RNA sequence: GGGAACGACUCGAGUAGAGUCGAAAAGCUCGGAGACGAGCAAGGCUGACAAAACAUUGUCCCAACCUCCACGUGGUGUCGGCUGGAUAAUGCUGCAUUAUGUUGCAUUUAUCAACUGGGAAUCAAACGUCAUUUACCUCUUCGGAGGUAAAUGACGAAAAGAAACAACAACAACAAC
Reactivity to 2A3 in 0.01 (KOAc 150mM, MgCl2 10mM, bicine 150mM(pH8.5), 24C), signal-to-noise 4, nucleotides 027 to 126: g010c000u000c000g000g020a140g000a080c010g000a000g000c000a000a030g040g000c020u010g000a010c000a030a150a020a040c050a190u040u150g020u080c020c000c000a010a060c030c010u060c030c030a160c190g060u120g010g010u020g010u010c000g000g000c000u010g000g000a010u010a020a000u000g000c000u010g000c010a060u100u140a170u300g010u020u020g000c000a000u000u070u120a020u020c020a010a020c020u020g000g000g000a020a070u130c070a050a020a020